[RMDB]
RNA sequence: GGGAACGACUCGAGUAGAGUCGAAAAUAUACAGCAGAAAGCCCCAGGCGAUUUUUUUAUCAAUCAACCAGGGGCUCUACUGUAAUGCCUAGACAACAUUAUAGUAGCCCGAUAACCGCCGUAAGGCCAUAUCCAUAUCCUUCGGGAUAUGGAUAUGAAAAGAAACAACAACAACAAC
Reactivity to DMS in 0.01 (KOAc 150mM, MgCl2 10mM, bicine 150mM(pH8.5), 24C), signal-to-noise 1, nucleotides 027 to 126: u000a120u000a180c080a040g000c080a070g000a200a210a120g000c010c020c010c000a060g110g000c300g000a000u000u000u010u020u060u020u000a080u030c140a030a080u000c060a040a050c000c010a030g000g010g010g020c000u000c010u010a010c000u000g000u000a000a020u000g000c010c000u000a200g010a150c300a110a110c020a010u000u010a030u010a040g000u000a010g010c000c000c000g010a100u030a040a150c190c060g020c000c010g050u040a100a150g020g010c040
Reactivity to 2A3 in 0.01 (KOAc 150mM, MgCl2 10mM, bicine 150mM(pH8.5), 24C), signal-to-noise 1, nucleotides 027 to 126: u130a000u020a080c020a020g050c000a010g160a210a140a000g000c010c000c000c000a000g100g000c000g000a030u000u050u070u040u000u300u300a140u300c060a020a000u040c010a020a080c050c030a040g010g020g000g280c000u000c000u000a010c000u010g000u000a000a000u020g020c000c000u020a020g030a070c000a030a000c010a010u010u000a010u020a010g000u010a000g000c020c010c000g020a020u060a080a100c110c020g010c000c030g030u030a020a050g010g020c000
Description:
Structure probing data (DMS and 2A3) for a 177-nucleotide construct. The data come from the RNA Mapping Database (RMDB), library RFMREP. For 2A3, 1,068 sequencing reads were counted. The RNA was probed in 150 mM KOAc, 10 mM MgCl2 and 150 mM bicine (pH 8.5) at 24 C.